[RMDB]
RNA sequence: GGGAACGACUCGAGUAGAGUCGAAAAGCACGCCGAUCAUGGGCCUGUCGAUCCAGACGCAACUGCUGCAACGUACGGCGAGCGCCGACGAGCGUGCGCGCAUCCUCGCGCAGAUUCAGGCCGGCAAGCUAGUGAUACCAUUCGUGGUAUCACUAGCAAAAGAAACAACAACAACAAC
Reactivity to DMS in 0.01 (KOAc 150mM, MgCl2 10mM, bicine 150mM(pH8.5), 24C), signal-to-noise 5, nucleotides 027 to 126: g030c040a040c100g000c010c040g010a070u000c080a140u000g020g020g000c000c010u000g020u000c110g000a050u000c060c090a130g010a070c060g020c050a150a140c100u020g020c040u000g010c070a130a160c140g010u000a100c010g020g000c030g020a120g020c100g010c010c020g000a070c090g000a130g010c010g000u000g010c020g010c020g010c050a090u010c050c040u010c130g000c030g020c020a060g000a090u010u000c030a050g010g030c010c010g020g010c110a120a120
Reactivity to 2A3 in 0.01 (KOAc 150mM, MgCl2 10mM, bicine 150mM(pH8.5), 24C), signal-to-noise 4, nucleotides 027 to 126: g020c000a010c050g000c020c020g070a090u090c050a150u200g060g020g000c010c020u050g030u080c050g030a050u030c030c040a020g050a070c070g030c090a090a140c080u170g020c020u060g010c060a090a090c110g090u230a060c000g010g020c050g020a130g050c120g010c020c010g030a050c010g020a040g020c020g010u020g000c010g000c000g000c010a100u040c010c030u010c020g000c000g000c010a000g020a060u080u050c020a010g020g000c010c020g000g000c060a050a020